[RMDB]
RNA sequence: GGGAACGACUCGAGUAGAGUCGAAAAGCUGAGAAAUUCGUUUCUCAGCACUGGAAAUAAAGCCGAAAGGCUUGCCAUUCCUUAUUUGGCGAAAGCCUGGCAUGAGCCUCCACUUCGGUGGAGGCAACGUUCCGGAAUGUUUCGACAUUCCGGAACGAAAAGAAACAACAACAACAAC
Reactivity to 2A3 in 0.01 (KOAc 150mM, MgCl2 10mM, bicine 150mM(pH8.5), 24C), signal-to-noise 1, nucleotides 027 to 126: g020c000u020g000a030g000a000a000a070u090u080c180g050u010u000u020c010u000c000a000g040c000a030c020u030g060g080a040a170a110u080a050a110a040g000c010c010g100a100a030a010g000g000c000u000u020g000c000c010a020u050u060c010c030u140u160a250u170u170u070g010g010c060g060a130a000a000g010c010c020u020g040g030c010a070u100g120a010g000c000c000u010c010c010a010c000u060u070c210g040g000u010g000g020a000g010g000c000a000a000
Reactivity to DMS in 0.01 (KOAc 150mM, MgCl2 10mM, bicine 150mM(pH8.5), 24C), signal-to-noise 1, nucleotides 027 to 126: g030c000u000g000a010g010a010a000a030u020u040c160g020u000u010u010c000u000c010a000g050c000a110c080u000g000g000a070a060a130u010a080a040a010g000c000c010g020a080a080a230g010g010c000u000u010g000c000c000a130u010u000c010c020u010u010a150u000u000u000g000g010c010g020a120a080a140g000c020c040u000g010g020c170a100u000g010a110g000c000c000u000c010c000a000c080u000u010c170g040g020u000g000g000a000g010g000c030a010a070